This 177-nucleotide RNA was probed chemically with DMS and 2A3.

RNA sequence: GGGAACGACUCGAGUAGAGUCGAAAAAGAGGCACACCUCAUUGCCUUCAGUGCGGAAGUGGUUUUCUCAACUCCAAUCAAAAAGGCAGAAAAAGUAAAGCAACGCGAUUUUCGCGCUGUUUUUUCGUUGAGAUUAAUAUUUCGAUAUUAAUCUCAAAAAAGAAACAACAACAACAAC
Reactivity to DMS in 0.01 (KOAc 150mM, MgCl2 10mM, bicine 150mM(pH8.5), 24C), signal-to-noise 9, nucleotides 027 to 126: a080g010a040g010g010c180a090c240a110c020c020u000c040a130u020u010g010c000c000u000u000c050a300g000u000g000c300g000g000a040a030g020u010g000g010u010u030u020u040c120u020c030a060a030c010u000c000c000a040a230u000c020a010a060a060a020a010g000g000c000a040g010a030a060a070a080a080g010u010a040a040a040g000c030a020a030c010g010c000g000a160u020u010u020u010c000g020c000g020c040u000g000u000u000u010u000u010u020c160g010
Reactivity to 2A3 in 0.01 (KOAc 150mM, MgCl2 10mM, bicine 150mM(pH8.5), 24C), signal-to-noise 9, nucleotides 027 to 126: a000g040a020g010g010c100a050c020a130c080c010u040c040a090u040u100g010c000c000u010u020c030a020g000u000g010c010g020g010a160a110g040u040g090g080u070u100u210u120c110u010c030a010a050c010u000c000c000a000a000u020c000a030a050a030a010a010g010g000c010a000g060a000a060a000a000a000g110u130a020a040a010g010c010a010a030c000g010c010g040a060u030u080u200u300c010g000c000g000c010u000g010u000u010u000u000u030u100c080g010
Overview: The reactions ran in a buffer of 150 mM KOAc, 10 mM MgCl2 and 150 mM bicine (pH 8.5), at 24 C.